[RMDB]
RNA sequence: GGGAACGACUCGAGUAGAGUCGAAAAUGUGAAUUCGUUCACACGGUGAGCGUACUACCGAGGGAGUAAAGUACCUACCCACCAGGGUCCCAAAUAGGACCCUGAGGGUACUAUUACAUCGAUCUCGGUAUCGCACAGUGCCUUUUUCGAAAGGCAAUUGAUUUCAUACCUUCGGGUAUGAAAUCAAAAAAGAAACAACAACAACAAC
Reactivity to 2A3 in 0.01 (KOAc 150mM, MgCl2 10mM, bicine 150mM(pH8.5), 24C), signal-to-noise 2, nucleotides 027 to 156: u070g000u020g010a060a100u160u100c210g040u030u010c020a020c030a050c160g150g050u110g040a170g010c020g000u060a060c050u000a000c050c000g000a000g010g000g020a060g000u020a000a040a000g020u000a000c000c020u070a100c020c050c060a030c010c010a010g000g000g010u020c020c020c020a250a300a080u300a080g000g000a000c000c000c000u010g000a000g000g000g010u000a000c000u000a030u010u000a000c090a170u290c050g080a130u000c000u030c000g000g000u040a080u100c000g000c000a040c030a060g050u020g020c010c010u100u020u000u070u080c120g140a050a000a000g000g010c000a000a020
Reactivity to DMS in 0.01 (KOAc 150mM, MgCl2 10mM, bicine 150mM(pH8.5), 24C), signal-to-noise 2, nucleotides 027 to 156: u010g020u000g000a040a110u000u000c300g010u000u000c010a030c000a050c090g000g010u010g020a090g010c070g030u000a080c120u010a030c000c040g010a030g060g020g020a200g040u000a020a040a060g030u010a000c000c010u000a020c030c010c010a300c110c000a050g010g040g000u000c010c000c000a040a150a190u000a040g020g000a050c000c000c020u000g000a020g010g030g000u000a010c000u000a090u000u000a040c010a220u000c130g020a140u000c000u010c020g020g030u010a020u000c020g000c030a120c100a110g010u010g000c000c020u000u000u000u000u030c230g010a060a020a010g020g020c020a030a020

Record summary
Chemical mapping of a 207-nucleotide RNA with 2A3 and DMS. The 2A3 profile rests on 1,374 reads. The reactions ran in a buffer of 150 mM KOAc, 10 mM MgCl2 and 150 mM bicine (pH 8.5), at 24 C. Reactivities are given for positions 27 through 156. For DMS, 3,110 sequencing reads were counted. 2A3 adducts were read by reverse transcription with SuperScript II with manganese.